Structure probing data (2A3 and DMS) for a 177-nucleotide construct.
[RMDB]
RNA sequence: GGGAACGACUCGAGUAGAGUCGAAAACUGAUUUCUUGAUUAAGUCAGAUACUUGCUUCAUGUCUUUCUUCAAAGCAGCCAUACUUUGAGCAUCUACCUUGCUAUUAAUCGUGGUCACUUCAACACCGCGACGAUCAUAAUUCGUUAUGAUCGUCGCAAAAGAAACAACAACAACAAC
Reactivity to 2A3 in 0.01 (KOAc 150mM, MgCl2 10mM, bicine 150mM(pH8.5), 24C), signal-to-noise 3, nucleotides 027 to 126: c020u020g020a060u070u060u090c050u140u230g190a240u170u060a060a010g000u000c010a010g000a050u080a060c030u030u050g070c020u030u050c020a040u070g050u000c000u040u080u000c030u040u090c010a060a020a000g020c040a010g030c060c010a080u080a100c050u010u040u110g000a000g020c010a020u020c010u050a080c010c030u040u040g010c010u040a030u210u180a150a050u070c040g020u020g010g020u000c010a030c080u140u070c040a090a010c050a020c070c030
Reactivity to DMS in 0.01 (KOAc 150mM, MgCl2 10mM, bicine 150mM(pH8.5), 24C), signal-to-noise 2, nucleotides 027 to 126: c020u000g010a070u000u000u000c070u020u000g020a140u010u010a050a040g000u000c040a000g010a120u000a060c010u000u000g000c030u000u010c050a110u000g010u000c010u000u000u000c030u000u000c100a020a070a020g010c060a050g020c080c030a020u000a080c090u000u030u010g010a050g000c040a010u020c060u000a070c070c010u000u000g000c050u000a070u000u000a040a050u000c140g030u010g010g010u000c170a020c080u010u010c130a040a090c160a140c140c070

About this RNA:
Conditions: 150 mM KOAc, 10 mM MgCl2 and 150 mM bicine (pH 8.5), 24 C. For DMS the reverse transcriptase was MarathonRT.